[RMDB]
RNA sequence: GGGAACGACUCGAGUAGAGUCGAAAAAGGAUUGUUAAGUCUUCCUUAUAAAUUCAGUCUUUCAUUUUCAUAACAUUUUAACCUUAUUUCUGUUAAAUGUCUUGAUGCCUAGUCAAAUUAUUUGACCCACUGUACACUUCUUCGGAAGUGUACAGUGAAAAGAAACAACAACAACAAC
Reactivity to DMS in 0.01 (KOAc 150mM, MgCl2 10mM, bicine 150mM(pH8.5), 24C), signal-to-noise 2, nucleotides 027 to 126: a080g020g020a050u010u000g020u010u010a080a050g010u020c140u000u010c110c010u000u000a150u000a060a050a130u010u010c050a050g010u020c020u000u010u020c090a140u000u000u000u010c010a050u000a090a010c010a020u000u000u000u000a010a050c010c280u010u020a190u010u010u000c170u000g000u000u000a010a020a020u000g000u000c080u000u000g010a040u000g000c120c040u000a060g010u000c000a050a010a180u000u010a090u000u000u000g010a050c010c300
Reactivity to 2A3 in 0.01 (KOAc 150mM, MgCl2 10mM, bicine 150mM(pH8.5), 24C), signal-to-noise 3, nucleotides 027 to 126: a010g060g000a080u120u070g050u160u090a090a070g080u040c050u040u080c040c020u170u110a230u100a130a220a070u140u060c010a010g060u010c000u040u040u020c060a130u150u050u050u070c040a030u060a080a010c000a010u170u140u040u060a030a010c010c030u110u180a200u230u300u150c050u050g010u020u000a050a040a000u040g020u000c020u000u030g010a030u050g040c020c030u010a010g020u020c010a010a020a150u250u130a120u050u130u030g020a000c000c060